[RMDB]
RNA sequence: GGGAACGACUCGAGUAGAGUCGAAAAUUCUUGCUUGUGGUUCCUGUGGUUUCACCUCGGAAGGCCGCCGCGGACCUGCAAAGAAGAAGAUAGGGCCAGAGGGGGAGUGAGCCUCGUCGUCGACGAAGUACUAUACGUAGUUCGCUACGUAUAGUACAAAAGAAACAACAACAACAAC
Reactivity to DMS in 0.01 (KOAc 150mM, MgCl2 10mM, bicine 150mM(pH8.5), 24C), signal-to-noise 6, nucleotides 027 to 126: u000u010c010u000u000g010c050u000u010g030u010g000g010u000u000c010c010u010g030u000g010g020u000u000u000c140a100c040c020u000c180g010g020a190a110g010g020c070c110g010c030c050g020c070g010g000a050c060c020u000g010c050a040a050a070g000a050a050g000a080a060g010a100u010a060g010g010g010c050c040a080g010a140g000g010g000g000g000a070g000u010g000a120g000c050c030u000c040g010u000c030g010u000c090g000a080c070g010a080a130
Reactivity to 2A3 in 0.01 (KOAc 150mM, MgCl2 10mM, bicine 150mM(pH8.5), 24C), signal-to-noise 5, nucleotides 027 to 126: u030u000c010u020u070g120c010u030u070g020u040g040g030u020u040c000c010u040g010u030g040g020u000u140u120c080a080c030c010u030c030g090g060a060a020g070g010c020c020g030c030c030g010c090g010g020a050c010c010u020g000c040a090a070a060g050a050a010g020a020a010g040a130u140a100g050g000g000c010c030a010g050a040g060g020g000g000g000a070g030u080g020a010g020c000c000u020c010g060u010c010g040u040c050g010a030c020g010a110a010